[RMDB]
RNA sequence: GGGAACGACUCGAGUAGAGUCGAAAAAACUCUAAGCCCUGACACUUAGGGGUUUUUAUGGAGAUUUUGUUCAUCACACAGGCAUGAGUAUGUGGUUAUUAAUUCAAUGUCUAGCCCUCUCUCCUCCCAGGAGGUUGGGGAGUAGGGCUGAAAACUAACUAAAUGCGAUGUUCGCAUCGCAUUUAGUAAAAGAAACAACAACAACAAC
Reactivity to 2A3 in 0.01 (KOAc 150mM, MgCl2 10mM, bicine 150mM(pH8.5), 24C), signal-to-noise 1, nucleotides 027 to 156: a000a000c070u090c000u010a010a000g000c000c030c050u030g140a060c030a050c140u060u060a080g000g040g030g020u050u000u040u050u230a160u130g060g020a080g000a040u050u060u090u120g100u050u090c050a020u100c010a030c000a000c000a050g030g080c030a100u050g010a050g000u100a070u240g100u040g160g050u140u270a130u130u160a090a080u140u050c050a020a040u010g040u040c050u050a000g000c000c000c000u000c020u000c000u000c000c000u020c020c000c000a090g300g030a140g090g000u160u070g020g000g010g000a000g010u300a000g000g030g000c000u030g000a000a000a000a000c030u020a000
Reactivity to DMS in 0.01 (KOAc 150mM, MgCl2 10mM, bicine 150mM(pH8.5), 24C), signal-to-noise 1, nucleotides 027 to 156: a040a060c010u000c000u000a020a030g030c040c000c000u010g000a150c110a030c050u000u000a070g020g000g050g010u000u010u010u020u020a080u000g010g000a140g020a170u000u000u010u000g000u010u010c060a080u000c040a100c090a170c050a050g050g010c030a060u000g010a170g040u000a100u000g010u000g010g010u000u000a090u010u000a050a160u000u000c080a070a100u010g010u000c040u000a060g020c010c000c010u000c030u000c010u000c010c010u020c060c000c050a230g050g010a170g050g020u010u010g030g000g040g010a000g030u000a020g020g010g020c000u000g000a000a040a040a100c060u000a110